[RMDB]
RNA sequence: GGGAACGACUCGAGUAGAGUCGAAAAUCUCUCUUGUUCGCAAGAGAGAAAAGAACGCCAAAGUGACGCUAACUUCCGCGUCAGGAAGGCGAAACGAGGUAAAAAGGGGGAUCUUCGGAUCCCCCAAGAUUGAUUUAUGGUUCGCCAUAAAUCAAUCAAAAGAAACAACAACAACAAC
Reactivity to 2A3 in 0.01 (KOAc 150mM, MgCl2 10mM, bicine 150mM(pH8.5), 24C), signal-to-noise 2, nucleotides 027 to 126: u020c000u000c000u000c010u000u030g030u040u050c150g000c110a010a000g000a010g020a000g000a010a010a000a000g000a040a030c020g000c010c010a070a030a000g080u010g010a000c000g020c010u060a220a120c070u200u030c060c020g000c000g060u010c000a000g010g010a050a040g020g000c010g010a010a010a000c040g010a070g050g080u150a070a090a030a080a080g000g010g000g000g000a000u000c000u020u040c120g030g010a000u000c010c000c000c000c000a000a010
Reactivity to DMS in 0.01 (KOAc 150mM, MgCl2 10mM, bicine 150mM(pH8.5), 24C), signal-to-noise 5, nucleotides 027 to 126: u000c000u000c010u000c000u000u000g000u010u020c170g050c010a020a000g010a010g010a010g000a010a030a050a120g000a120a110c070g010c000c000a030a110a300g010u000g000a100c010g010c010u010a110a200c180u020u010c150c130g010c070g000u000c060a040g000g010a210a170g000g010c010g010a020a110a040c070g010a130g010g000u010a040a040a070a090a090g030g000g010g010g010a000u000c000u010u000c150g020g000a010u000c000c000c000c000c000a010a000
An RNA of 177 nucleotides, treated with 2A3 and DMS and read out base by base. The data come from the RNA Mapping Database (RMDB), library M2PK50. Reactivities are given for positions 27 through 126. The reactions ran in a buffer of 150 mM KOAc, 10 mM MgCl2 and 150 mM bicine (pH 8.5), at 24 C. The DMS profile rests on 5,014 reads.